About this RNA:
An RNA of 207 nucleotides, treated with DMS and 2A3 and read out base by base. In probing experiments dimethyl sulfate is read out at A N1 and C N3, which are open when not base-paired. For 2A3, 966 sequencing reads were counted. For 2A3 the reverse transcriptase was SuperScript II with manganese.

RNA sequence: GGGAACGACUCGAGUAGAGUCGAAAAGCACAGGAUAUCAUCCGUGGAAUUAACUUUUCUGAGUGCUGAUAAGGGCCAUAGUUAUUUGAACAAUUGCUGAUAACGACAGGUAAGCCGUAGGUUUUAUACCACGCACGCACCAAAUGAUCACUGGAAGCUGUGUAUGCUUCUUCGGAAGCAUACACAGAAAAGAAACAACAACAACAAC
Reactivity to DMS in 0.01 (KOAc 150mM, MgCl2 10mM, bicine 150mM(pH8.5), 24C), signal-to-noise 1, nucleotides 027 to 156: g040c030a140c040a050g010g010a200u000a070u000c090a180u000c010c050g000u000g040g020a100a020u000u090a130a100c180u000u010u010u000c050u000g020a100g010u000g000c060u020g000a070u000a080a220g040g020g020c080c040a110u000a130g020u000u000a040u000u000u010g040a020a110c130a050a090u000u000g070c130u010g000a160u000a080a110c000g000a050c120a050g000g020u000a100a100g020c070c020g050u020a090g040g000u000u010u000u040a230u020a120c010c000a010c070g000c020a050c000g070c020a160c030c100a010a040a100u000g020a100u000c060a140c080u000g000g050a160a130g010
Reactivity to 2A3 in 0.01 (KOAc 150mM, MgCl2 10mM, bicine 150mM(pH8.5), 24C), signal-to-noise 2, nucleotides 027 to 156: g060c020a010c010a030g000g060a080u060a080u180c070a050u000c060c110g040u040g000g060a060a060u100u040a140a090c030u140u040u100u020c100u110g060a050g080u070g000c030u000g000a030u000a190a090g060g010g000c010c000a050u050a060g020u050u020a030u030u060u050g070a090a050c070a220a190u140u140g050c010u050g000a010u010a050a010c020g040a040c020a010g000g010u060a000a070g050c030c000g080u100a180g020g030u100u020u060u130a070u030a050c000c000a010c020g070c000a040c010g000c020a030c010c000a010a040a130u100g040a020u050c000a040c100u030g000g050a000a050g020